[RMDB]
RNA sequence: GGGAACGACUCGAGUAGAGUCGAAAAGGGCCAACCUGCCUUUGGGCAACAGUUGGCAAAGGCGAACCUUCAGAGACUCUAAUGGAGUGGGCGCAAGCUUAAGGGAGAGUCCAAUCCACUGGGAAACCAGGUCCACAGCAGUAACGGGGUGAUGCUCGAUAUCAAGUAGGUUCGCCUACUUGAUAUCAAAAGAAACAACAACAACAAC
Reactivity to DMS in 0.01 (KOAc 150mM, MgCl2 10mM, bicine 150mM(pH8.5), 24C), signal-to-noise 2, nucleotides 027 to 156: g020g030g040c040c010a010a020c020c050u000g030c000c000u000u020u030g100g010g000c010a050a070c070a110g040u000u010g000g000c030a020a040a060g020g030c030g000a050a040c010c000u000u010c040a140g010a300g000a170c010u010c010u020a060a100u000g030g000a050g020u000g000g020g010c040g020c100a090a290g000c050u020u000a110a100g010g030g030a250g000a070g020u000c030c020a040a140u000c000c020a080c040u000g000g010g000a120a100a190c010c050a070g040g010u000c000c030a090c040a100g000c000a060g010u000a060a110c060g000g000g020g020u000g010a100u000g000c050u010c060
Reactivity to 2A3 in 0.01 (KOAc 150mM, MgCl2 10mM, bicine 150mM(pH8.5), 24C), signal-to-noise 5, nucleotides 027 to 156: g070g020g000c000c010a010a000c010c010u010g020c020c000u120u110u190g130g020g000c020a050a020c040a090g020u020u020g000g000c040a070a050a000g030g010c040g000a040a020c000c010u050u070c050a030g030a010g000a140c020u020c020u090a110a080u100g050g000a060g050u080g010g010g010c060g010c040a070a040g010c020u150u180a060a080g050g010g010a050g010a000g040u010c020c000a010a060u020c020c010a030c030u020g000g010g010a050a050a070c020c010a020g020g010u050c030c020a070c010a040g040c020a010g020u060a090a040c040g010g000g000g030u030g030a030u100g020c030u060c100
An RNA of 207 nucleotides, treated with DMS and 2A3 and read out base by base. Conditions: 150 mM KOAc, 10 mM MgCl2 and 150 mM bicine (pH 8.5), 24 C. For DMS the reverse transcriptase was MarathonRT. The data come from the RNA Mapping Database (RMDB), library ARCHII.